The record gives the reactivity of an RNA of 177 nucleotides to DMS. The data come from the RNA Mapping Database (RMDB), library OK2TRN. DMS (dimethyl sulfate) methylates the pairing face of unpaired adenines and cytosines. Conditions: 150 mM KOAc, 10 mM MgCl2 and 150 mM bicine (pH 8.5), 24 C.
RNA sequence: GGGAACGACUCGAGUAGAGUCGAAAAUGAAUAACAGAGGAAAUGCUUGUCAAGAAGCCGGCUCGGGCAGUAUUCAUGAAGUAUGUUCCACUGGUGACUCCUUCCCAGGACAACUAGGUAGAAACAGAGCCUAUUGGUUGUUCGCAACCAAUAGGCUAAAAGAAACAACAACAACAAC
Reactivity to DMS in 0.01 (KOAc 150mM, MgCl2 10mM, bicine 150mM(pH8.5), 24C), signal-to-noise 1, nucleotides 027 to 126: u010g020a090a050u010a150a210c000a050g000a090g050g020a050a150a040u000g010c010u000u010g010u010c180a010a080g000a100a090g030c040c030g040g170c120u000c110g030g000g000c010a120g000u000a050u000u000c100a060u000g020a040a000g010u010a020u000g000u000u000c000c040a050c010u010g000g000u020g000a080c190u000c030c130u000u010c010c020c010a140g010g000a000c080a030a010c040u020a060g030g000u010a070g010a140a050a130c140a140g000